Notes: The record gives the reactivity of an RNA of 177 nucleotides to DMS and 2A3. For DMS the reverse transcriptase was MarathonRT. Reactivities are given for positions 27 through 126. Source: RMDB library OK2TRN, as collected in RNAgym. The RNA was probed in 150 mM KOAc, 10 mM MgCl2 and 150 mM bicine (pH 8.5) at 24 C. For 2A3, 1,172 sequencing reads were counted.
RNA sequence: GGGAACGACUCGAGUAGAGUCGAAAAGCAUUGUGUGAAUAGCAUUACUUACUUGCCUGGAUUCCUUUACUGCAGAACACCUCAGUAUUCAUGUCAAGAAGUAUGCAUGACUAAAUGGAAGUUCCAGUGAGGAACUACCUUUCGAGGUAGUUCCUCAAAAAGAAACAACAACAACAAC
Reactivity to DMS in 0.01 (KOAc 150mM, MgCl2 10mM, bicine 150mM(pH8.5), 24C), signal-to-noise 2, nucleotides 027 to 126: g000c010a010u010u000g010u000g050u010g010a200a050u000a160g020c010a010u000u020a030c030u000u000a070c000u000u000g010c080c030u000g000g000a120u000u010c120c140u000u010u000a070c020u010g010c230a040g000a130a080c280a110c100c020u010c030a050g010u000a030u000u000c000a030u010g000u010c070a030a020g000a030a050g020u000a020u000g000c020a020u000g000a070c070u000a080a030a030u000g020g000a100a090g010u000u000c010c020a130g030
Reactivity to 2A3 in 0.01 (KOAc 150mM, MgCl2 10mM, bicine 150mM(pH8.5), 24C), signal-to-noise 1, nucleotides 027 to 126: g070c020a050u060u010g020u000g020u060g110a130a030u070a050g020c010a020u070u010a050c010u030u000a050c000u020u050g010c000c000u000g020g070a050u090u140c020c000u160u080u030a110c060u020g040c110a050g060a140a120c080a110c130c000u030c000a010g020u020a030u000u050c020a000u100g080u060c020a000a060g000a030a020g080u030a030u060g010c000a020u050g010a050c010u100a020a000a020u050g010g040a060a070g020u030u000c010c020a070g110